[RMDB]
RNA sequence: GGGAACGACUCGAGUAGAGUCGAAAAGCGACUUGCUGCGCGUGGCCCUAAGCAAUGAAGAUGACACUUGAGAGAGGUUCCACUCUGCAGAGACAUCUUCACCGUCAGGUGGCGCGCUGGAUUACGAUGACCACCAUCCUUUCGAGGAUGGUGGUCAAAAAGAAACAACAACAACAAC
Reactivity to DMS in 0.01 (KOAc 150mM, MgCl2 10mM, bicine 150mM(pH8.5), 24C), signal-to-noise 2, nucleotides 027 to 126: g050c070g000a110c130u000u000g000c040u020g010c020g000c030g000u000g000g050c070c000c030u000a090a160g000c060a180a060u000g010a040a020g010a030u000g010a160c300a040c000u000u000g040a190g000a030g010a070g040g010u000u060c100c180a250c020u000c000u010g000c010a230g010a040g030a060c000a000u000c000u010u010c000a020c240c090g000u000c270a120g000g010u000g000g000c000g010c050g000c030u010g000g000a010u010u000a040c130g000a200
Reactivity to 2A3 in 0.01 (KOAc 150mM, MgCl2 10mM, bicine 150mM(pH8.5), 24C), signal-to-noise 1, nucleotides 027 to 126: g000c000g170a100c080u090u200g050c050u020g000c000g000c000g030u000g090g030c000c000c000u030a110a020g000c090a160a070u100g000a000a000g000a000u040g110a040c100a050c110u050u070g000a010g000a000g000a000g120g040u040u160c060c000a060c050u010c000u000g000c010a030g000a010g010a020c060a000u000c000u000u000c000a000c000c050g000u070c020a000g020g050u080g000g000c000g000c000g090c110u020g000g000a010u030u130a100c040g070a090
Chemical mapping of a 177-nucleotide RNA with DMS and 2A3. Reactivities are given for positions 27 through 126. Conditions: 150 mM KOAc, 10 mM MgCl2 and 150 mM bicine (pH 8.5), 24 C.